Chemical mapping of a 207-nucleotide RNA with DMS and 2A3.
Values cover nucleotides 27 to 156.
For DMS the reverse transcriptase was MarathonRT.
The 2A3 profile rests on 1,208 reads.
[RMDB]
RNA sequence: GGGAACGACUCGAGUAGAGUCGAAAACAUUAAUAGUAUACAUGCUAAAAUAACUAGUUAUAAGUUUGAAUCCGUCAAUUUUGAUUCCAAAAUUGAAUGGACUGGGGAUGGUCUAUACAAUAUAUCCCUUAAAAAUUAUGGCAUCAAGACGUGGCAAUACUAUAGACUAGUUCGCUAGUCUAUAGUAAAAAGAAACAACAACAACAAC
Reactivity to DMS in 0.01 (KOAc 150mM, MgCl2 10mM, bicine 150mM(pH8.5), 24C), signal-to-noise 2, nucleotides 027 to 156: c020a090u000u000a120a150u000a130g020u010a030u010a070c020a090u000g010c020u010a080a100a130a150u000a070a080c080u000a160g020u000u000a130u010a090a070g020u010u000u000g010a080a090u000c010c000g030u000c010a050a010u010u000u010u000g010a300u000u000c170c040a000a010a010a020u000u000g000a090a060u010g020g020a020c100u000g030g030g000g040a070u000g000g000u010c090u010a120u020a100c040a090a150u000a130u020a080u000c000c000c000u030u010a030a040a050a020a120u010u000a030u000g010g020c000a070u010c060a050a100g010a070c040g020u000g000g010c020a060a250
Reactivity to 2A3 in 0.01 (KOAc 150mM, MgCl2 10mM, bicine 150mM(pH8.5), 24C), signal-to-noise 2, nucleotides 027 to 156: c030a030u140u170a100a150u100a080g030u060a070u090a220c060a050u170g000c020u090a030a090a110a210u080a130a070c060u020a010g070u110u160a070u060a270a050g000u000u130u100g030a040a040u000c010c010g000u010c010a020a000u020u010u020u050g130a140u170u230c110c010a000a000a070a000u010u060g020a030a040u050g020g000a020c070u030g010g000g000g020a000u020g000g000u010c080u120a170u030a140c050a110a000u120a010u020a010u080c030c010c000u020u060a050a070a000a000a000u110u080a050u100g020g030c000a000u020c060a130a000g090a040c020g010u070g100g030c000a010a050